[RMDB]
RNA sequence: GGGAACGACUCGAGUAGAGUCGAAAAGGAGGGCAGCGAAGCUGUCGAGCACGAGACCAAGAUGCUGAUUCCGAGUCGUUAGAGGCCGGUUUAGCGACGGCCUAUAAGCAUCGGUCGAGUGCCUCCAGGGACGGUGCGGGUUCGCUCGCGUCGUCCCAAAAGAAACAACAACAACAAC
Reactivity to 2A3 in 0.01 (KOAc 150mM, MgCl2 10mM, bicine 150mM(pH8.5), 24C), signal-to-noise 9, nucleotides 027 to 126: g010g010a010g000g020g000c000a000g000c050g130a150a020g010c010u000g010u000c000g010a020g000c000a000c000g010a010g000a010c000c010a060a070g000a000u000g000c010u020g020a070u180u030c050c030g000a010g020u010c010g000u010u060a050g010a020g080g000c000c010g030g030u050u050u150a050g020c050g060a040c000g010g000c000c000u000a000u000a010a000g000c000a000u000c010g000g000u000c000g000a010g000u000g010c000c000u000c000c000a030
Reactivity to DMS in 0.01 (KOAc 150mM, MgCl2 10mM, bicine 150mM(pH8.5), 24C), signal-to-noise 8, nucleotides 027 to 126: g000g010a040g020g010g000c000a010g010c020g010a120a110g020c010u000g000u000c010g010a100g010c000a020c000g000a300g010a010c000c010a100a130g010a010u000g000c000u000g000a230u040u030c140c030g000a030g010u000c010g010u000u010a050g010a030g010g010c000c010g020g010u010u010u020a110g010c200g010a040c000g000g000c010c000u010a080u010a070a030g010c000a000u000c010g010g000u000c000g010a230g010u000g010c010c010u000c000c010a150
The data come from the RNA Mapping Database (RMDB), library OK1LIB. Structure probing data (2A3 and DMS) for a 177-nucleotide construct. High DMS reactivity at an A or C suggests that its Watson-Crick edge is free. The RNA was probed in 150 mM KOAc, 10 mM MgCl2 and 150 mM bicine (pH 8.5) at 24 C.